Structure probing data (DMS) for a 177-nucleotide construct. The reactions ran in a buffer of 150 mM KOAc, 10 mM MgCl2 and 150 mM bicine (pH 8.5), at 24 C. Source: RMDB library OK2TST, as collected in RNAgym. The DMS profile rests on 828 reads.
RNA sequence: GGGAACGACUCGAGUAGAGUCGAAAACAGUUGUCAGACGUAGACUUUCGCAUCCUCCCCCUGGACGAUGAGUUCCCUGAUGUCGAGAUGUCGGUGCGCGGAGAACCUUACUUCCGCGGGAACCUCAAUCGUUUGUGUGCUUCGGCACACAAACGAUAAAAGAAACAACAACAACAAC
Reactivity to DMS in 0.01 (KOAc 150mM, MgCl2 10mM, bicine 150mM(pH8.5), 24C), signal-to-noise 1, nucleotides 027 to 126: c140a160g000u010u000g020u030c040a130g010a060c160g010u000a090g010a100c050u030u000u000c100g000c050a080u030c020c090u000c020c000c070c090c040u000g000g000a090c070g010a020u020g000a220g010u000u000c000c020c060u020g010a020u000g010u000c070g000a130g000a140u000g020u000c070g020g020u000g000c040g000c000g000g010a010g000a020a140c070c100u020u010a050c040u000u000c000c000g030c020g010g000g000a030a020c050c050u000c100a180